[RMDB]
Structure probing data (DMS and 2A3) for a 177-nucleotide construct.
For DMS the reverse transcriptase was MarathonRT.
The DMS profile rests on 2,717 reads.
For 2A3, 4,024 sequencing reads were counted.
The reactions ran in a buffer of 150 mM KOAc, 10 mM MgCl2 and 150 mM bicine (pH 8.5), at 24 C.
RNA sequence: GGGAACGACUCGAGUAGAGUCGAAAAAAUCAGGUGGCGAUGGAGCGACGGGGCAUAAAAGGCCUCUCUGGGAACGACUUGAGUGCAAACUCAUGGUAGGACCUGAGAGGAGCCGAUGUUCCGUCGUCCUGUUCCCGAUUUUCGAAUCGGGAACAGGAAAAGAAACAACAACAACAAC
Reactivity to DMS in 0.01 (KOAc 150mM, MgCl2 10mM, bicine 150mM(pH8.5), 24C), signal-to-noise 2, nucleotides 027 to 126: a050a010u030c020a040g000g000u010g010g000c080g000a060u000g000g000a030g050c000g010a030c000g060g010g010g000c000a000u000a050a000a160a140g000g000c000c000u000c000u000c000u030g000g020g020a060a170c000g000a040c060u020u010g000a000g030u000g030c300a150a120a050c010u000c000a010u030g010g020u040a040g000g000a300c010c000u000g000a010g000a010g000g010a110g020c000c000g010a020u000g010u010u000c000c010g000u000c000g000u010
Reactivity to 2A3 in 0.01 (KOAc 150mM, MgCl2 10mM, bicine 150mM(pH8.5), 24C), signal-to-noise 3, nucleotides 027 to 126: a000a010u190c100a040g060g000u020g030g010c030g040a050u070g020g040a050g020c000g000a000c000g010g010g010g000c000a000u070a050a130a020a010g010g010c000c000u000c000u000c000u020g040g020g020a160a020c000g010a000c010u000u010g000a000g010u040g060c080a100a070a070c000u000c000a020u030g030g010u090a030g000g060a080c000c000u010g000a010g000a000g000g010a010g020c000c000g020a010u000g010u000u020c000c010g000u010c000g010u010